[RMDB]
RNA sequence: GGGAACGACUCGAGUAGAGUCGAAAAUGGCUUUGGAUUUCCUCCCAGGUGUAGAAUCAAUCUCCAUGUCCUCUCGCCUGGGCCUCUUCGCCGGGGGUCCUCCCUCUUCGUCCUUCUUCUUUCUCAACACAUGAGAAUAGUUCGCUAUUCUCAUGUGAAAAGAAACAACAACAACAAC
Reactivity to DMS in 0.01 (KOAc 150mM, MgCl2 10mM, bicine 150mM(pH8.5), 24C), signal-to-noise 4, nucleotides 027 to 126: u010g010g000c060u000u000u010g010g010a150u000u000u000c030c020u000c040c000c020a050g020g020u000g010u010a030g010a070a070u000c100a070a090u010c080u020c080c070a110u000g000u000c120c040u000c050u000c030g000c010c020u000g020g000g000c070c010u000c040u000u010c110g000c070c080g010g000g010g000g010u010c030c030u000c040c000c020u000c030u000u000c050g010u000c020c010u000u000c060u010u000c080u000u000u000c000u000c020a070a260
Reactivity to 2A3 in 0.01 (KOAc 150mM, MgCl2 10mM, bicine 150mM(pH8.5), 24C), signal-to-noise 3, nucleotides 027 to 126: u060g030g000c020u130u030u100g050g020a070u080u090u070c000c010u020c010c000c000a010g010g010u020g040u120a040g030a050a040u070c030a020a060u050c050u020c090c050a080u080g030u000c010c010u000c010u000c010g010c010c000u000g000g020g000c000c000u010c010u090u050c030g030c020c020g000g000g000g020g000u000c020c010u010c010c010c000u010c000u020u020c010g060u020c010c000u040u040c000u070u030c010u020u050u000c020u010c010a030a050